[RMDB]
RNA sequence: GGGAACGACUCGAGUAGAGUCGAAAAGAAAGGCAGCGAGUGCAGCCCACGCAGUGGCAUGCUUUUGCAUGCCCAGUCGAGCCCACGACUAAGGGCAGCUGCGGCACUGAGGGCAGCUGCCGAAAGAGGAUACUGGUAAUUUCGAUUACCAGUAUCCAAAAGAAACAACAACAACAAC
Reactivity to 2A3 in 0.01 (KOAc 150mM, MgCl2 10mM, bicine 150mM(pH8.5), 24C), signal-to-noise 5, nucleotides 027 to 126: g080a020a060a000g020g010c010a010g000c030g070a050g130u130g040c050a020g000c020c010c000a040c070g100c040a030g020u110g110g010c030a020u030g010c010u170u300u220u300g000c010a020u000g000c000c000c000a000g000u010c000g000a010g010c010c010c000a030c020g050a000c030u070a050a120g060g020g000c010a010g000c040u050g000c010g030g000c070a040c130u130g060a140g020g020g020c010a010g000c010u000g000c000c000g000a010a020a000g060a020
Reactivity to DMS in 0.01 (KOAc 150mM, MgCl2 10mM, bicine 150mM(pH8.5), 24C), signal-to-noise 6, nucleotides 027 to 126: g000a130a130a160g010g010c010a020g010c010g010a070g040u010g010c070a110g010c010c050c050a160c140g000c110a090g040u010g020g010c010a010u000g000c010u000u000u000u010g020c010a030u000g010c010c000c030a020g000u000c010g010a140g000c000c000c000a290c020g000a030c030u010a130a100g010g000g030c020a120g010c050u000g020c080g020g000c100a080c100u010g000a090g010g000g000c000a140g000c010u000g010c000c000g000a010a050a080g000a190
An RNA of 177 nucleotides, treated with 2A3 and DMS and read out base by base.
High DMS reactivity at an A or C suggests that its Watson-Crick edge is free.
For 2A3, 10,221 sequencing reads were counted.
The DMS profile rests on 7,232 reads.
Conditions: 150 mM KOAc, 10 mM MgCl2 and 150 mM bicine (pH 8.5), 24 C.